The record gives the reactivity of an RNA of 177 nucleotides to DMS and 2A3.
Conditions: 150 mM KOAc, 10 mM MgCl2 and 150 mM bicine (pH 8.5), 24 C.
[RMDB]
RNA sequence: GGGAACGACUCGAGUAGAGUCGAAAAUGGUCGGCGUCAGCUAUUUCGGUAUACGAGAGAUGCAGAAUAUUUUAUUUGAAUAUCAACGACUUAAAUCAUAGUUGUUUUUUCUGUAGUGGCUAAAUACCUUCUAUCCAAUAUUCGUAUUGGAUAGAAGAAAAGAAACAACAACAACAAC
Reactivity to DMS in 0.01 (KOAc 150mM, MgCl2 10mM, bicine 150mM(pH8.5), 24C), signal-to-noise 4, nucleotides 027 to 126: u010g000g010u000c020g000g030c170g000u000c050a060g010c040u010a160u000u020u000c030g000g020u010a090u070a110c040g000a050g010a050g010a120u010g000c040a070g010a070a050u010a030u020u010u000u020a110u030u010u010g000a020a040u000a030u000c060a060a100c030g010a040c010u000u020a050a090a080u030c130a050u010a070g020u000u000g010u000u000u000u000u000u000c010u000g020u000a040g010u000g010g020c060u020a040a060a070u020a060c100
Reactivity to 2A3 in 0.01 (KOAc 150mM, MgCl2 10mM, bicine 150mM(pH8.5), 24C), signal-to-noise 4, nucleotides 027 to 126: u170g010g030u050c040g010g050c010g080u010c010a000g000c000u060a140u080u040u070c030g000g000u110a090u050a250c030g000a010g010a000g000a090u110g030c000a000g060a110a000u080a090u070u110u060u030a250u080u160u180g040a050a010u040a000u110c030a050a030c010g060a030c000u100u220a070a110a050u130c090a060u070a130g010u010u010g020u010u030u020u000u010u020c020u010g020u060a120g070u070g090g000c040u060a040a100a020u090a050c000